[RMDB]
RNA sequence: GGGAACGACUCGAGUAGAGUCGAAAAUGAGAGAUUUAUCUGUCCUAUUCUCUAGGCUCAGAAUGCCAAAAAAAUCUGCUCCGUAUCCUCCACAAGAGAGGAUGACACAUCCAUGAUGAGGGAUAUGAGAAGGCCAUUGAGUUGACACUAAAAAUGACAUACGGUUGGAUUUCGAUCCAACCGUAUGAAAAGAAACAACAACAACAAC
Reactivity to 2A3 in 0.01 (KOAc 150mM, MgCl2 10mM, bicine 150mM(pH8.5), 24C), signal-to-noise 3, nucleotides 027 to 156: u120g010a040g010a000g020a040u030u080u120a160u100c030u030g050u010c010c010u040a080u140u050c030u000c000u040a090g010g030c040u000c040a030g050a080a080u120g020c030c050a090a050a000a000a000a000a060u020c030u080g020c000u020c020c000g030u060a030u010c000c010u000c020c020a070c020a110a030g160a010g010a000g060g020a030u000g040a020c050a000c010a100u020c050c000a060u120g040a070u080g020a100g030g060g020a000u060a040u050g050a080g020a080a050g050g030c010c040a090u090u060g020a000g000u010u060g040a030c020a000c100u110a040a050a170a060a070u290g000a010
Reactivity to DMS in 0.01 (KOAc 150mM, MgCl2 10mM, bicine 150mM(pH8.5), 24C), signal-to-noise 2, nucleotides 027 to 156: u000g010a100g010a090g000a110u000u010u000a070u000c040u000g020u000c010c090u000a090u000u010c030u010c100u000a150g000g010c040u020c020a090g030a110a090u020g040c010c030a020a000a040a080a110a030a080u000c070u000g040c000u000c000c030g010u000a080u000c000c000u000c000c040a150c100a110a170g020a130g030a050g000g030a020u000g010a070c080a070c110a140u000c020c020a160u000g010a100u010g010a050g020g010g000a070u000a040u000g000a200g010a110a060g010g030c000c040a080u000u000g020a110g020u020u000g030a150c030a060c090u000a040a040a060a080a070u000g010a300